RNA sequence: GGGAACGACUCGAGUAGAGUCGAAAAGCUGGUCGAAGUAACAGGCGUAUCAUUAUUGCUAUCAUCAUUCCGGUCUUGGCUUCUUCUUUCUUGAUCUCCUUCACGAGGUCCACUUGAACGAGUAAUAGUGAAGCCAAACAUUGCCCCUGGCACACGAGUCCUAAUGCUCAUUCGUGAGCAUUAGGACAAAAGAAACAACAACAACAAC
Reactivity to 2A3 in 0.01 (KOAc 150mM, MgCl2 10mM, bicine 150mM(pH8.5), 24C), signal-to-noise 1, nucleotides 027 to 156: g030c000u010g010g010u090c050g040a090a020g020u090a080a000c040a050g000g020c060g010u050a020u190c070a120u110u190a080u010u220g090c020u030a020u100c050a060u020c000a020u130u040c040c010g050g030u050c070u050u050g000g000c000u020u020c000u150u060c000u010u090u030c010u040u090g020a000u010c000u000c000c090u070u090c070a060c130g010a000g000g030u050c020c030a070c060u030u040g000a040a020c070g000a030g020u080a020a130u050a070g090u160g050a010a000g000c000c000a050a000a000c050a020u050u180g050c010c020c000c000u010g020g080c080a010c010a000c070g060a030
Description
The record gives the reactivity of an RNA of 207 nucleotides to 2A3. For 2A3, 655 sequencing reads were counted. For 2A3 the reverse transcriptase was SuperScript II with manganese. Conditions: 150 mM KOAc, 10 mM MgCl2 and 150 mM bicine (pH 8.5), 24 C.